Structure probing data (DMS and 2A3) for a 177-nucleotide construct. Values cover nucleotides 27 to 126. For 2A3, 129,744 sequencing reads were counted. For 2A3 the reverse transcriptase was SuperScript II with manganese.
[RMDB]
RNA sequence: GGGAACGACUCGAGUAGAGUCGAAAAACAUCUAGAGGCAUGGUGAUUUGGCGCUUGCGGAGUAAACAGUGCUCGUUCUGCUAUGUUGCCAAGAACGUUACAAAUGGAUAAUACGAUGUAAUGUCAAGGAGUGUAUUGAUUUCGGUCAGUGUGUUCCAAAAGAAACAACAACAACAAC
Reactivity to DMS in 0.01 (KOAc 150mM, MgCl2 10mM, bicine 150mM(pH8.5), 24C), signal-to-noise 9, nucleotides 027 to 126: a080c070a060u000c050u000a090g010a160g010g010c030a040u000g010g020u000g010a120u000u000u000g010g010c020g010c040u000u000g020c030g010g010a100g010u010a090a080a090c110a090g010u010g010c080u000c080g010u000u000c020u000g010c030u000a050u000g010u000u010g020c020c040a040a060g010a070a050c050g010u000u000a030c060a030a080a120u010g000g010a110u010a070a100u010a090c090g010a180u000g010u000a040a040u000g010u000c060a070a120
Reactivity to 2A3 in 0.01 (KOAc 150mM, MgCl2 10mM, bicine 150mM(pH8.5), 24C), signal-to-noise 9, nucleotides 027 to 126: a000c020a040u030c020u070a050g010a050g130g030c030a030u060g040g020u070g070a140u060u030u060g020g000c020g010c040u020u040g010c020g030g020a020g020u090a030a120a060c060a070g070u050g100c030u030c050g040u080u020c010u010g010c000u020a040u180g090u100u150g070c010c000a010a020g030a050a010c020g020u040u040a020c030a030a170a060u120g040g020a050u060a200a040u110a170c040g010a000u030g020u060a060a030u060g040u060c030a040a060

The DMS profile rests on 230,666 reads.